[RMDB]
An RNA of 207 nucleotides, treated with 2A3 and DMS and read out base by base. The DMS profile rests on 1,994 reads. It was measured as part of the RMDB library RNAMAK. For 2A3 the reverse transcriptase was SuperScript II with manganese. For 2A3, 4,397 sequencing reads were counted.

RNA sequence: GGGAACGACUCGAGUAGAGUCGAAAAGGGGUCACGACAUGUCCGGAUAGAAGCGAGGAUCGUACACUGAAGCCUCCACGGUGUACGGGAGCUUCUAGAAGGACAACAGCGUGACGGAGGCACCCAAAAGCGAUAUCAGUUUCGACUGAUAUCGCAAGAUAUACGUGGGUUUCGACCCACGUAUAUCAAAAGAAACAACAACAACAAC
Reactivity to 2A3 in 0.01 (KOAc 150mM, MgCl2 10mM, bicine 150mM(pH8.5), 24C), signal-to-noise 3, nucleotides 027 to 156: g040g020g060g030u010c000a000c000g050a030c130a290u300g000u000c010c000g000g010a020u000a000g000a000a000g000c000g040a200g060g000a010u000c000g000u000a000c000a000c010u060g040a120a020g010c000c000u000c010c000a000c020g010g000u010g000u000a010c010g010g000g000a010g000c000u000u020c000u000a000g010a020a040g010g030a040c020a020a000c000a000g070c000g000u000g000a000c000g000g000a010g010g000c000a040c000c000c010a080a110a020a030g000c000g000a000u000a000u000c000a010g010u010u100u150c220g140a060c010u010g000a000u000a000u000c000g000c000a000a010
Reactivity to DMS in 0.01 (KOAc 150mM, MgCl2 10mM, bicine 150mM(pH8.5), 24C), signal-to-noise 1, nucleotides 027 to 156: g040g000g000g000u000c020a040c010g010a080c100a150u080g090u020c020c040g050g000a300u040a000g000a060a040g000c020g020a100g030g010a040u000c010g030u000a060c000a010c040u000g020a040a100g000c000c000u000c000c020a200c000g000g000u000g040u010a000c060g000g000g010a080g010c010u000u000c000u000a010g010a300a300g000g010a040c010a040a040c040a140g010c000g000u000g030a060c010g040g010a010g100g020c030a030c000c030c000a110a040a110a080g040c000g030a010u000a000u000c000a030g010u000u000u000c280g000a050c010u000g000a010u000a000u010c000g020c000a000a060